Source: RMDB library TTRDES, as collected in RNAgym. An RNA of 177 nucleotides, treated with 2A3 and DMS and read out base by base. The reactions ran in a buffer of 150 mM KOAc, 10 mM MgCl2 and 150 mM bicine (pH 8.5), at 24 C. 2A3 adducts were read by reverse transcription with SuperScript II with manganese.

RNA sequence: GGGAACGACUCGAGUAGAGUCGAAAAAAGAUAUGGAGCAGCGUGCCAGGUCUGCCAUGCGUUGAUCGCUAAUCGGAAACGAUUAGCGGGAGCAUGGCUGACCGGUAAUACGCUGCUCCUAAGUCAAGACACUAUUUAGGUUCGCCUAAAUAGUGUCAAAAGAAACAACAACAACAAC
Reactivity to 2A3 in 0.01 (KOAc 150mM, MgCl2 10mM, bicine 150mM(pH8.5), 24C), signal-to-noise 2, nucleotides 027 to 126: a000a000g070a020u070a040u110g000g000a000g020c000a000g000c000g040u020g050c110c090a180g030g000u000c010u010g000c020c000a000u000g000c000g280u300u030g010a010u010c000g000c000u000a010a000u000c010g070g000a100a050a030c020g010a010u000u010a010g000c020g000g000g000a010g000c000a010u010g010g000c000u000g010a000c000c000g020g010u010a010a030u100a010c010g010c010u010g010c000u000c000c000u000a000a000g000u000c010a010a060
Reactivity to DMS in 0.01 (KOAc 150mM, MgCl2 10mM, bicine 150mM(pH8.5), 24C), signal-to-noise 3, nucleotides 027 to 126: a100a070g000a050u000a300u010g000g000a000g040c000a000g010c000g040u000g000c050c030a160g060g000u000c010u000g000c000c000a010u000g010c020g010u000u020g010a060u010c000g010c000u000a000a000u000c010g010g000a160a090a170c000g010a010u000u000a010g000c000g000g000g010a010g020c000a000u000g000g010c010u000g020a010c000c010g000g010u010a060a130u020a100c000g010c000u000g010c000u000c000c000u000a000a050g000u000c050a120a160